[RMDB]
The record gives the reactivity of an RNA of 177 nucleotides to 2A3 and DMS. DMS adducts were read by reverse transcription with MarathonRT. 2A3 is a SHAPE reagent: it acylates the 2'-hydroxyl of flexible nucleotides of all four kinds. The reactions ran in a buffer of 150 mM KOAc, 10 mM MgCl2 and 150 mM bicine (pH 8.5), at 24 C. The DMS profile rests on 2,093 reads.
RNA sequence: GGGAACGACUCGAGUAGAGUCGAAAAGAUAUGGAGAUCCACACAGCGAAGAACUCGGAAACGAGGGAGCUGCAGUGGAGUCUCCUAAGUCAAAACGGCUACAUGAUCUUCGGAUCAUGUAGCCGAAGGUACAAACAUACUUCGGUAUGUUUGUACCAAAAGAAACAACAACAACAAC
Reactivity to 2A3 in 0.01 (KOAc 150mM, MgCl2 10mM, bicine 150mM(pH8.5), 24C), signal-to-noise 2, nucleotides 027 to 126: g020a020u070a050u170g000g000a000g000a000u000c010c000a020c000a000c010a010g050c000g300a300a030g000a150a030c000u000c010g010g010a070a060a040c030g000a020g000g000g010a010g030c010u030g040c240a090g010u040g000g000a020g040u000c000u000c000c000u010a110a010g060u050c030a000a000a090a130c000g000g000c010u010a000c010a000u020g000a000u020c000u050u090c300g030g010a000u000c000a000u000g000u010a000g000c000c000g000a000a010
Reactivity to DMS in 0.01 (KOAc 150mM, MgCl2 10mM, bicine 150mM(pH8.5), 24C), signal-to-noise 3, nucleotides 027 to 126: g010a090u010a300u000g010g000a020g010a200u010c000c000a000c000a300c000a010g010c000g020a120a160g000a080a190c000u000c000g020g010a070a130a190c010g020a050g010g000g010a080g020c000u000g020c080a180g000u000g000g000a030g020u000c000u000c000c000u010a000a080g040u000c030a050a070a080a140c020g010g000c000u000a000c000a000u000g000a020u000c000u010u000c270g020g000a010u020c010a000u000g000u020a000g000c000c000g000a000a010